Source information:
Chemical mapping of a 177-nucleotide RNA with 2A3 and DMS. For 2A3, 967 sequencing reads were counted. Values cover nucleotides 27 to 126. For DMS, 950 sequencing reads were counted.
[RMDB]
RNA sequence: GGGAACGACUCGAGUAGAGUCGAAAACGGUCGGCGAACUUCAGGCGGACGCGAUUGCACCCUGACUCGGCCGGCUGACACCUGGCGGGCACCUAGUCGAUCGUGCCCGCUGGCACGAUCCACUGACCAGCUACGUAUCGUUCGCGAUACGUAGCUGAAAAGAAACAACAACAACAAC
Reactivity to 2A3 in 0.01 (KOAc 150mM, MgCl2 10mM, bicine 150mM(pH8.5), 24C), signal-to-noise 1, nucleotides 027 to 126: c000g000g020u010c020g020g040c000g010a050a070c020u050u000c060a020g050g000c130g120g070a110c090g050c010g210a270u090u300g000c040a050c000c030c000u020g020a020c030u010c030g200g000c060c000g000g000c000u010g010a020c010a040c030c000u000g020g000c010g060g000g000c000a020c000c030u120a070g130u130c070g040a090u050c060g000u000g040c030c000c010g040c030u020g000g010c000a020c150g050a120u000c000c030a040c030u000g000a060c000
Reactivity to DMS in 0.01 (KOAc 150mM, MgCl2 10mM, bicine 150mM(pH8.5), 24C), signal-to-noise 2, nucleotides 027 to 126: c050g010g020u000c000g000g030c000g000a040a090c140u010u000c010a010g000g000c210g020g000a120c120g010c010g000a110u010u020g040c030a120c140c020c000u000g000a090c300u000c070g010g010c000c000g000g000c000u030g030a100c250a080c130c030u000g010g010c000g000g000g000c010a000c050c100u000a130g020u000c180g000a060u000c120g000u000g000c010c000c180g010c040u020g000g010c100a040c140g010a100u000c000c030a070c150u010g000a220c090
In probing experiments dimethyl sulfate is read out at A N1 and C N3, which are open when not base-paired.